[RMDB]
RNA sequence: GGGAACGACUCGAGUAGAGUCGAAAAGAUAUGGAGUGUAAUAUGCGAUAAGCUGCAUUCGGAAACGAAUGGCAGCUUUUGACGCAUAUGCACUCCUAAGUCAAACGGGAUACUUCGGUAUCCCGAAGAGUAUUGAAUUCUUCGGAAUUCAAUACUCAAAAGAAACAACAACAACAAC
Reactivity to 2A3 in 0.01 (KOAc 150mM, MgCl2 10mM, bicine 150mM(pH8.5), 24C), signal-to-noise 5, nucleotides 027 to 126: g010a010u040a030u110g000g030a030g010u020g000u050a260a300u010a170u020g000c060g080a110u020a300a000g000c000u000g000c000a010u000u020c010g020g030a050a040a020c030g020a010a010u060g270g100c010a010g000c000u020u010u010u040g030a000c020g000c000a000u000a000u000g000c010a000c000u000c000c000u010a010a000g020u000c020a070a050a080c010g000g000g000a010u010a000c000u020u110c300g120g000u000a000u010c000c000c010g000a000a000
Reactivity to DMS in 0.01 (KOAc 150mM, MgCl2 10mM, bicine 150mM(pH8.5), 24C), signal-to-noise 4, nucleotides 027 to 126: g010a020u000a290u010g000g000a010g010u000g000u000a030a060u000a000u000g000c010g010a170u010a020a010g000c000u000g000c000a020u000u010c000g030g010a060a060a120c000g010a010a000u000g020g020c000a010g010c000u000u000u000u000g010a200c090g010c000a010u000a000u000g010c000a000c010u000c000c000u000a000a040g000u000c010a110a130a250c020g020g000g000a010u000a000c000u010u010c240g030g010u000a010u000c000c000c000g000a000a040